This 177-nucleotide RNA was probed chemically with 2A3 and DMS.
The data come from the RNA Mapping Database (RMDB), library OK1LIB.
The reactions ran in a buffer of 150 mM KOAc, 10 mM MgCl2 and 150 mM bicine (pH 8.5), at 24 C.
For 2A3 the reverse transcriptase was SuperScript II with manganese.
For DMS, 4,809 sequencing reads were counted.
RNA sequence: GGGAACGACUCGAGUAGAGUCGAAAACCACGUCGCCGUGGGCGCGAAUGUCGAUUUGGGCGCGUUCGGGGACGUACGCGUCCCCCCAUUCCACCACAUCGCUGGGCAGCGUUGAUAGGAAUUUACAUCGAAUGUAGCAAUUCGUUGCUACAUUCGAAAAAGAAACAACAACAACAAC
Reactivity to 2A3 in 0.01 (KOAc 150mM, MgCl2 10mM, bicine 150mM(pH8.5), 24C), signal-to-noise 4, nucleotides 027 to 126: c010c010a020c060g110u080c020g010c050c010g080u110g030g030g030c080g000c050g060a080a060u180g060u150c080g050a110u040u080u220g030g010g030c010g000c040g030u060u070c020g020g010g000g050a000c010g000u030a020c090g010c000g050u040c010c000c010c000c000c010a030u080u000c010c010a060c000c010a050c000a050u070c070g000c060u080g010g100g070c050a010g000c020g010u000u000g040a100u130a060g020g080a070a090u120u060u070a110c110a120
Reactivity to DMS in 0.01 (KOAc 150mM, MgCl2 10mM, bicine 150mM(pH8.5), 24C), signal-to-noise 3, nucleotides 027 to 126: c030c020a170c080g000u000c030g000c050c020g040u000g020g000g010c040g040c090g000a080a030u010g000u010c140g000a110u010u050u030g000g010g020c020g000c020g000u000u030c050g010g020g010g000a070c010g000u000a050c070g000c010g000u000c000c010c040c030c070c030a070u010u010c020c010a090c080c050a110c010a030u000c050g010c020u000g000g010g030c110a080g000c050g000u000u010g000a050u030a080g000g000a110a040u000u020u030a080c220a180